Chemical mapping of a 177-nucleotide RNA with DMS and 2A3. It was measured as part of the RMDB library M2PK90.
RNA sequence: GGGAACGACUCGAGUAGAGUCGAAAAUUAAAGCGCGAAAAAGAUCGAUCGAUCGUUUGAACGCCCAAGUCGAAGUUUGAUACGGGCAUACUAGCUAGCUAGCUAGCAAAACAAACUUCGUAAAAAAGAUCUCAUUAUUCUUCGGAAUAAUGAGAUCAAAAGAAACAACAACAACAAC
Reactivity to DMS in 0.01 (KOAc 150mM, MgCl2 10mM, bicine 150mM(pH8.5), 24C), signal-to-noise 3, nucleotides 027 to 126: u000u030a090a110a160g000c010g020c010g000a150a040a020a050a030g000a020u000c010g020a120u000c230g000a010u000c000g020u000u000u000g000a130a060c030g000c000c030c040a180a150g000u000c000g030a020a010g000u000u000u000g020a100u000a130c250g010g010g010c180a110u000a060c030u000a000g000c000u000a170g020c190u000a050g000c000u000a010g000c030a030a070a070a130c010a010a000a010c000u010u000c010g000u010a010a020a080a090a050a070
Reactivity to 2A3 in 0.01 (KOAc 150mM, MgCl2 10mM, bicine 150mM(pH8.5), 24C), signal-to-noise 3, nucleotides 027 to 126: u120u050a080a060a020g030c020g010c020g080a100a030a000a000a020g010a010u030c050g080a090u130c120g000a010u010c030g050u020u010u050g020a050a020c030g030c010c000c000a030a000g080u030c010g020a000a010g000u010u030u040g110a120u150a160c080g010g060g020c030a010u030a040c000u010a010g010c000u020a030g080c060u070a000g000c000u030a010g020c020a040a100a010a020c000a010a020a000c000u010u020c020g030u100a100a030a000a000a030a020